This 177-nucleotide RNA was probed chemically with 2A3 and DMS. As a SHAPE reagent, 2A3 marks flexible, mostly unpaired nucleotides at the ribose 2'-OH. The RNA was probed in 150 mM KOAc, 10 mM MgCl2 and 150 mM bicine (pH 8.5) at 24 C. The 2A3 profile rests on 2,340 reads.
[RMDB]
RNA sequence: GGGAACGACUCGAGUAGAGUCGAAAAGUUGAAGUGUUCGCACUUCAACAAACGCUCAACUCAUGGAGCGCAAGACGUAUAGCUACAUAUUCGACAUGAGAAAAAGACUGUAGUUCGCUACAGUCAACACAGGAAACACGUUCGCGUGUUUCCUGUGAAAAGAAACAACAACAACAAC
Reactivity to 2A3 in 0.01 (KOAc 150mM, MgCl2 10mM, bicine 150mM(pH8.5), 24C), signal-to-noise 2, nucleotides 027 to 126: g000u010u000g010a000a000g010u010g020u060u090c160g100c060a020c010u030u000c000a000a000c000a000a000a000c020g000c000u010c010a030a050c030u000c010a010u000g020g000a020g010c040g000c110a060a020g130a030c050g050u070a060u040a130g100c080u180a050c070a120u140a090u120u110c030g040a010c010a010u030g000a000g000a060a010a000a040a050g010a000c000u010g000u010a000g010u030u070c230g030c080u020a000c000a000g000u000c000a000a000
Reactivity to DMS in 0.01 (KOAc 150mM, MgCl2 10mM, bicine 150mM(pH8.5), 24C), signal-to-noise 2, nucleotides 027 to 126: g000u030u000g000a000a000g040u000g030u000u000c300g000c010a000c000u000u000c000a020a000c010a070a130a100c000g000c000u020c000a090a100c000u020c000a030u010g000g010a020g010c000g000c110a060a060g010a070c110g020u000a060u020a020g000c140u040a080c150a110u010a030u010u000c120g010a160c000a010u000g000a010g000a060a150a120a080a080g000a020c000u000g020u000a010g000u000u000c220g010c000u040a000c000a020g030u000c000a070a100